[RMDB]
RNA sequence: GGGAACGACUCGAGUAGAGUCGAAAAGGCGGGCCUCCCACCCGAAGGUCGCCCGUCCGAGGGUGUGCAUACCGGUAUUCCCCGGGACCAACUGCGAGUACGAUUCGGCCGAGGCCUUCAGGCGCGCUACUGUUCCUUAAUUCGUUAAGGAACAGUAAAAAGAAACAACAACAACAAC
Reactivity to 2A3 in 0.01 (KOAc 150mM, MgCl2 10mM, bicine 150mM(pH8.5), 24C), signal-to-noise 8, nucleotides 027 to 126: g030g000c010g040g080g020c010c010u050c010c030c010a060c010c010c010g010a010a010g020g010u040c020g060c070c040c010g040u000c000c010g010a040g030g030g040u150g030u070g010c010a020u070a190c010c010g020g020u090a270u170u240c040c020c010c010g020g000g060a090c050c050a080a080c100u090g030c060g070a070g060u070a040c020g050a200u030u050c010g010g000c010c010g010a020g020g010c010c000u000u030c010a010g040g000c130g000c000g000c140
Reactivity to DMS in 0.01 (KOAc 150mM, MgCl2 10mM, bicine 150mM(pH8.5), 24C), signal-to-noise 9, nucleotides 027 to 126: g010g020c010g010g000g010c040c020u000c020c020c030a240c090c060c080g000a050a040g010g010u000c060g010c190c080c020g000u010c010c020g000a060g010g000g010u010g020u010g010c050a070u010a140c070c020g010g010u010a180u010u010c120c120c010c030g000g000g000a130c120c090a080a080c120u010g010c060g000a120g020u000a030c040g000a300u000u000c020g010g000c020c030g000a130g000g000c010c010u000u000c030a070g010g000c030g010c020g010c060
This 177-nucleotide RNA was probed chemically with 2A3 and DMS. It was measured as part of the RMDB library OK2TRN.